[RMDB]
RNA sequence: GGGAACGACUCGAGUAGAGUCGAAAAGGUGGUAUUCGCGGUUCUAUCAGCCGGAUCCAUGGGAAGGGAGUUACGAUCUGACGGAUCCGCAAUCGUUCAACCGGUAUGCUUACGUCAGGAAUGAUCCCUCCCCAAACGAGUUCGCUCGUUUGGGGAGAAAAGAAACAACAACAACAAC
Reactivity to DMS in 0.01 (KOAc 150mM, MgCl2 10mM, bicine 150mM(pH8.5), 24C), signal-to-noise 2, nucleotides 027 to 126: g000g060u000g030g010u110a020u050u000c050g000c000g000g010u000u000c060u040a020u010c230a080g000c160c000g030g000a000u110c010c010a180u000g030g020g060a070a070g000g000g000a070g000u020u050a240c120g000a250u010c000u000g020a000c000g000g000a230u010c300c180g040c000a020a020u000c000g030u060u010c280a220a040c270c030g040g000u000a000u000g000c000u000u050a160c040g000u030c010a000g000g000a110a070u040g000a170u020c000c110
Reactivity to 2A3 in 0.01 (KOAc 150mM, MgCl2 10mM, bicine 150mM(pH8.5), 24C), signal-to-noise 4, nucleotides 027 to 126: g100g000u050g000g000u060a070u040u050c030g040c040g110g040u080u000c040u040a100u080c040a000g040c020c060g020g010a020u000c000c010a050u030g010g000g090a040a090g050g020g000a040g000u070u100a050c070g020a120u060c000u020g010a020c020g000g000a040u020c010c040g010c000a010a010u010c010g060u090u150c030a100a130c060c000g000g010u080a110u140g020c020u080u140a000c010g000u000c030a000g040g050a060a040u110g010a010u040c020c000